RNA sequence: GGGAACGACUCGAGUAGAGUCGAAAAGCUGCGUGAAACCUCGCUGUUUUCUUGGCUAACUUUCAGCGAGGUGAGGCAAGGCGGCAAAAAAAAGUUGGGAGCAGCAACGGCAAGCAAAAAAAAGGUUACAAGUUGCGAUGGUUCGCCAUCGCAACAACUUAAGAAGGUACUUCGGUACCUUCUUAAGAAAAGAAACAACAACAACAAC
Reactivity to 2A3 in 0.01 (KOAc 150mM, MgCl2 10mM, bicine 150mM(pH8.5), 24C), signal-to-noise 2, nucleotides 027 to 156: g010c020u030g010c020g110u130g070a120a020a010c000c000u000c000g000c000u010g040u000u050u020u030c070u130u170g140g000c070u050a080a060c020u060u050u030c010a010g000c000g010a000g000g000u010g000a000g010g010c050a030a020g060g000c020g020g000c030a070a060a040a040a000a000a000a000g060u080u040g010g020g020a050g010c010a000g000c020a040a030c010g060g000c020a010a050g020c050a020a030a020a060a020a000a020a050g060g020u020u040a050c050a110a090g000u000u010g000c000g000a000u000g000g050u030u060c150g000c080c000a000u000c010g000c000a000a000c000a000a000
Reactivity to DMS in 0.01 (KOAc 150mM, MgCl2 10mM, bicine 150mM(pH8.5), 24C), signal-to-noise 2, nucleotides 027 to 156: g020c010u010g040c040g020u020g020a260a220a070c010c010u000c000g020c000u010g020u000u010u000u000c010u010u000g030g000c050u000a060a040c040u000u000u010c010a040g020c020g010a070g020g020u000g000a020g000g010c010a070a170g010g030c020g020g000c060a020a000a000a040a050a020a020a040g010u020u000g010g040g010a080g010c070a040g040c000a050a060c040g010g050c060a100a080g020c060a000a000a000a010a080a030a100a060g010g020u000u000a080c110a060a150g000u000u000g000c020g000a020u000g000g000u000u000c300g000c060c000a000u000c000g040c000a000a000c000a020a040
The record gives the reactivity of an RNA of 207 nucleotides to 2A3 and DMS. For DMS, 4,847 sequencing reads were counted. The reactions ran in a buffer of 150 mM KOAc, 10 mM MgCl2 and 150 mM bicine (pH 8.5), at 24 C. It was measured as part of the RMDB library M2RFPK.